About this RNA:
Chemical mapping of a 177-nucleotide RNA with DMS and 2A3. For 2A3 the reverse transcriptase was SuperScript II with manganese. It was measured as part of the RMDB library TTRDEL. The 2A3 profile rests on 7,124 reads.

[RMDB]
RNA sequence: GGGAACGACUCGAGUAGAGUCGAAAAGAUAUGGACCUUCGCUGUUUCGUUAUCGGAAACGAUAACCGAAAGUGAACGAAGUGUCCUAAGUCAAAGAGCUUUGUCUACUUCGGUAGACAAAGCUCAACUAGAGGGAAAUGUUCGCAUUUCCCUCUAGAAAAGAAACAACAACAACAAC
Reactivity to DMS in 0.01 (KOAc 150mM, MgCl2 10mM, bicine 150mM(pH8.5), 24C), signal-to-noise 3, nucleotides 027 to 126: g000a010u000a040u010g000g000a010c010c000u000u010c010g000c010u010g010u000u000u000c030g000u000u000a000u000c000g020g010a010a020a030c000g010a020u000a000a000c190c100g020a000a010a030g070u010g000a030a100c010g000a010a010g020u020g010u000c000c000u000a000a050g000u000c010a110a110a120g010a000g010c000u000u000u000g000u000c000u000a000c000u000u010c180g030g000u000a010g000a000c000a000a010a000g010c000u000c000a000a060
Reactivity to 2A3 in 0.01 (KOAc 150mM, MgCl2 10mM, bicine 150mM(pH8.5), 24C), signal-to-noise 3, nucleotides 027 to 126: g010a010u020a010u050g010g010a000c000c030u010u000c020g030c060u120g300u290u010u020c000g000u010u010a000u000c020g010g000a000a020a010c010g000a000u020a000a020c030c080g040a040a030a070g300u300g180a020a010c000g000a000a000g090u150g010u300c000c000u000a020a000g020u000c030a070a050a160g010a000g000c000u000u000u010g000u010c000u010a020c000u030u100c300g090g000u000a000g010a000c010a010a000a000g000c000u000c000a000a010